[RMDB]
RNA sequence: GGGAACGACUCGAGUAGAGUCGAAAAGUUCCUCAGCAAUGCUGAUCAGCUGAGGGUUAGCCGGUCCUAAGUCUGCCCGUAAGUCGAAGCAGACAACAGGGAAACAGGUUAAUAUUCCUGUGCCAGUAAAUCCGUGACGAUUCGUCGUCACGGAUUUAAAAGAAACAACAACAACAAC
Reactivity to DMS in 0.01 (KOAc 150mM, MgCl2 10mM, bicine 150mM(pH8.5), 24C), signal-to-noise 1, nucleotides 027 to 126: g000u010u010c000c000u000c040a000g000c010a060a130u010g020c040u020g000a060u030c000a290g010c000u000g000a010g010g000g020u010u010a020g030c000c010g000g030u000c000c000u000a090a180g000u000c010u000g000c000c060c030g060u000a060a090g000u000c020g040a100a300g000c080a000g000a020c000a020a100c220a170g000g000g020a030a070a050c010a020g020g000u000u000a000a040u020a230u000u010c000c000u000g000u020g000c260c020a100g000u000
Reactivity to 2A3 in 0.01 (KOAc 150mM, MgCl2 10mM, bicine 150mM(pH8.5), 24C), signal-to-noise 2, nucleotides 027 to 126: g060u080u060c000c000u000c000a000g000c050a060a070u210g030c110u010g030a130u100c060a010g040c000u000g000a030g000g030g000u000u060a000g000c020c020g020g030u040c000c000u050a110a000g000u000c000u020g030c020c050c030g070u090a030a030g110u110c020g060a040a010g050c000a010g100a020c020a020a030c090a060g050g000g000a150a050a000c010a000g000g000u000u010a070a000u020a090u020u050c000c040u030g050u060g050c020c000a030g010u020